An RNA of 177 nucleotides, treated with DMS and 2A3 and read out base by base. The 2A3 profile rests on 15,717 reads. Conditions: 150 mM KOAc, 10 mM MgCl2 and 150 mM bicine (pH 8.5), 24 C. It was measured as part of the RMDB library OK2TRN. For DMS the reverse transcriptase was MarathonRT. For 2A3 the reverse transcriptase was SuperScript II with manganese.
RNA sequence: GGGAACGACUCGAGUAGAGUCGAAAAUUUUUGGUAGAGAUGGGGUUUCACCAUUUUGGACAGGAUGGUGUCAAUCUCGUGACCUCAUGAUCCGCCUGCCGUGACCUCAUGAUCCGCCUGCCUUGGCACAUAUAACGACUUUCGAGUCGUUAUAUGUAAAAGAAACAACAACAACAAC
Reactivity to DMS in 0.01 (KOAc 150mM, MgCl2 10mM, bicine 150mM(pH8.5), 24C), signal-to-noise 9, nucleotides 027 to 126: u000u010u010u010u000g010g020u000a070g010a070g000a050u000g010g000g000g010u000u010u010c010a030c030c110a080u000u000u000u000g020g010a090c110a090g000g000a030u000g010g010u000g020u000c120a040a070u000c080u000c120g010u000g000a060c040c030u000c050a060u000g000a090u000c040c040g010c030c020u000g010c060c060g010u000g000a070c030c020u000c050a050u000g010a090u000c030c040g010c020c010u000g010c060c040u000u010g010g010c140
Reactivity to 2A3 in 0.01 (KOAc 150mM, MgCl2 10mM, bicine 150mM(pH8.5), 24C), signal-to-noise 6, nucleotides 027 to 126: u090u080u030u070u080g020g010u040a030g000a010g000a050u020g010g000g040g000u020u150u100c020a010c010c010a020u100u090u080u110g070g030a040c040a070g080g020a070u070g030g040u040g020u070c030a040a120u030c050u020c150g030u050g030a030c000c010u030c050a050u080g080a130u030c020c010g020c010c020u030g030c030c010g020u030g040a040c010c000u030c030a030u070g070a140u020c010c010g010c000c010u030g020c010c020u050u070g080g000c060